Conditions: 150 mM KOAc, 10 mM MgCl2 and 150 mM bicine (pH 8.5), 24 C.
An RNA of 177 nucleotides, treated with DMS and 2A3 and read out base by base.
The 2A3 profile rests on 1,389 reads.
RNA sequence: GGGAACGACUCGAGUAGAGUCGAAAACUCACCUGUCGUCGUCGACGAAGGCAUGUGAGCUUCAAUCUCCGUGAAGAGCGUCAGCGGACGGCCUCUGAGACGAGCGAUGGACAGUAGAGCUCGUCUCCAUCGGACCUGAGUUCGCUCAGGUCCGAUGAAAAGAAACAACAACAACAAC
Reactivity to DMS in 0.01 (KOAc 150mM, MgCl2 10mM, bicine 150mM(pH8.5), 24C), signal-to-noise 2, nucleotides 027 to 126: c000u000c000a040c050c030u020g010u000c000g010u000c000g020u020c210g010a130c030g000a100a020g000g000c020a000u000g000u000g000a000g010c050u020u000c220a170a090u000c050u010c000c000g020u010g010a100a050g000a080g020c050g000u010c010a100g020c140g000g010a020c040g010g000c050c050u010c080u000g000a020g000a000c000g000a000g000c000g000a200u010g000g000a110c250a090g000u000a040g020a300g000c000u000c020g030u000c000u000c000
Reactivity to 2A3 in 0.01 (KOAc 150mM, MgCl2 10mM, bicine 150mM(pH8.5), 24C), signal-to-noise 1, nucleotides 027 to 126: c010u000c000a050c050c030u010g000u020c010g020u000c000g000u010c110g090a300c000g020a060a000g100g010c000a000u050g050u030g020a020g010c050u150u030c040a020a260u030c010u000c040c060g140u090g070a100a000g070a010g010c020g050u020c030a050g030c090g160g040a040c030g000g050c020c000u060c020u050g000a010g000a020c000g000a000g000c000g030a100u100g060g070a040c060a050g150u140a030g030a010g020c000u000c000g000u000c000u000c000
It was measured as part of the RMDB library VIROID.